[RMDB]
RNA sequence: GGGAACGACUCGAGUAGAGUCGAAAAGGGCGGUGCGGUCGAACCGAUAACCGGUGAUCAGGGCACCCGAGCCGGUACGGACAAAGUCCAGCUGGAAUGUCUCGGCGGCCAAGCCGGACGCCAGCCAAUCCUAGAUGAACUUCGGUUCAUCUAGGAUAAAAGAAACAACAACAACAAC
Reactivity to DMS in 0.01 (KOAc 150mM, MgCl2 10mM, bicine 150mM(pH8.5), 24C), signal-to-noise 4, nucleotides 027 to 126: g000g030g010c040g010g000u000g010c070g010g020u010c050g000a100a150c030c020g000a120u010a100a080c140c020g040g000u000g000a130u010c080a140g010g010g010c070a070c060c010c030g020a210g010c000c020g010g020u010a080c110g000g020a070c090a070a080a180g010u010c060c070a180g000c000u000g000g000a050a030u000g000u000c020u020c030g010g000c030g010g010c170c160a110a220g000c000c010g000g000a030c020g000c010c010a020g000c010c240a050
Reactivity to 2A3 in 0.01 (KOAc 150mM, MgCl2 10mM, bicine 150mM(pH8.5), 24C), signal-to-noise 2, nucleotides 027 to 126: g040g010g000c050g030g000u070g010c030g030g030u060c050g050a070a050c010c020g030a070u050a100a060c060c020g000g020u030g020a050u110c080a060g070g060g000c050a090c030c030c010g000a010g030c010c020g030g000u040a040c070g010g010a020c040a080a190a020g020u000c030c020a010g000c010u020g000g050a130a130u150g030u000c130u070c220g020g000c030g010g090c110c020a090a020g000c000c000g020g010a000c010g000c000c000a000g000c010c020a020